[RMDB]
RNA sequence: GGGAACGACUCGAGUAGAGUCGAAAACAUAUGACGGAGAGUGGAACACUCAGCGGAAACGCAUCCAAUGUCUGAAGUCUUUAAUGGGUAUAACAGUGAGUUGACCCAGAUCCCAACAGACAAUAAAACACCGAACUAACUUCGGUUAGUUCGGUGUAAAAGAAACAACAACAACAAC
Reactivity to DMS in 0.01 (KOAc 150mM, MgCl2 10mM, bicine 150mM(pH8.5), 24C), signal-to-noise 1, nucleotides 027 to 126: c080a000u000a130u020g020a080c060g000g000a110g010a040g000u000g010g000a190a160c110a020c030u000c000a190g010c000g000g020a020a130a160c050g000c020a300u000c070c080a120a120u000g000u000c000u010g000a140a200g000u000c000u010u010u010a190a140u000g000g000g010u000a080u000a000a000c030a150g050u040g000a010g000u000u010g000a040c000c000c000a000g000a090u000c000c000c000a070a100c040a020g030a000c010a010a010u000a050a040a170
Reactivity to 2A3 in 0.01 (KOAc 150mM, MgCl2 10mM, bicine 150mM(pH8.5), 24C), signal-to-noise 1, nucleotides 027 to 126: c030a020u170a080u300g020a000c050g000g040a060g020a020g080u060g030g210a200a030c030a010c020u000c030a020g000c000g020g030a060a020a000c000g000c000a030u000c020c010a020a160u070g000u000c000u010g050a050a000g020u000c000u040u070u020a060a080u050g050g030g000u090a220u050a270a020c000a020g090u100g300a160g050u140u020g010a010c010c010c000a010g010a000u010c050c000c010a020a040c000a020g020a000c060a040a000u100a090a100a010
The data come from the RNA Mapping Database (RMDB), library M2PK90. An RNA of 177 nucleotides, treated with DMS and 2A3 and read out base by base. The 2A3 profile rests on 881 reads. The DMS profile rests on 563 reads. 2A3 adducts were read by reverse transcription with SuperScript II with manganese.